[RMDB]
RNA sequence: GGGAACGACUCGAGUAGAGUCGAAAAGGGGUCGUGCGGGAGACGUGGGUAAGACAUGAAAUACUGAAGCCUCCACGGUAUUUCAACAGCUUACCCACGUCAUCGAUCGCACGACGGAGGCACCCAAAACCUACCAACGGUUCGCCGUUGGUAGGAACGUUCUACAUACCUUCGGGUAUGUAGAACGAAAAGAAACAACAACAACAAC
Reactivity to 2A3 in 0.01 (KOAc 150mM, MgCl2 10mM, bicine 150mM(pH8.5), 24C), signal-to-noise 1, nucleotides 027 to 156: g020g020g020g020u000c010g000u000g000c000g020g000g000a020g000a000c000g000u000g000g000g010u010a000a010g020a050c080a190u140g000a000a010a000u020a000c010u000g050a100a030g020c000c010u020c000c000a040c000g000g000u000a000u000u010u010c040a100a050c120a120g020c020u030u040a010c030c000c010a000c000g000u000c000a010u040c000g010a000u000c000g010c010a000c000g000a000c000g000g000a000g010g000c000a030c000c000c000a030a130a110a120c000c000u000a000c000c000a010a000c000g010g100u060u090c300g100c090c000g000u000u010g000g010u000a000g000g000a010a000
This 207-nucleotide RNA was probed chemically with 2A3.
It was measured as part of the RMDB library RNAMAK.
The reactions ran in a buffer of 150 mM KOAc, 10 mM MgCl2 and 150 mM bicine (pH 8.5), at 24 C.
The 2A3 profile rests on 2,142 reads.